RNA sequence: GGGAACGACUCGAGUAGAGUCGAAAAGAGGGAGAAGGCGGGUGUGUGGAGCCUCGACCCAUGCCCCCUCCUCCAAGAAGAGGGAUUUGGGAGUAGCUUAGGCUAUGCAAAUUUCAGGUGGAGCGGGUCCUUUAAUGUGGUUCGCCACAUUAAAGGAAAAAGAAACAACAACAACAAC
Reactivity to DMS in 0.01 (KOAc 150mM, MgCl2 10mM, bicine 150mM(pH8.5), 24C), signal-to-noise 4, nucleotides 027 to 126: g020a160g000g000g010a020g010a020a010g000g020c200g050g000g020u000g020u000g000u020g020g000a110g010c100c070u010c160g000a140c010c020c010a020u000g000c020c000c000c000c000u010c010c010u000c010c020a070a070g000a110a120g000a140g000g010g010a100u000u000u000g010g000g000a180g010u000a020g010c020u010u000a150g020g020c010u000a000u000g000c110a040a050a100u010u010u000c130a060g000g000u000g000g000a150g010c150g000g000g000
Reactivity to 2A3 in 0.01 (KOAc 150mM, MgCl2 10mM, bicine 150mM(pH8.5), 24C), signal-to-noise 2, nucleotides 027 to 126: g030a020g020g050g000a010g000a020a060g020g050c180g040g060g020u030g000u020g000u150g020g010a030g110c040c060u050c020g080a060c000c000c000a000u020g000c020c000c020c000c010u000c000c000u030c020c000a010a030g040a060a010g050a100g030g000g050a110u130u070u110g060g000g040a130g040u040a000g010c020u100u080a090g080g010c010u040a010u060g000c030a080a060a200u150u160u170c060a030g000g080u070g000g030a040g020c150g000g000g000
This 177-nucleotide RNA was probed chemically with DMS and 2A3. The DMS profile rests on 4,471 reads. It was measured as part of the RMDB library OK2TST.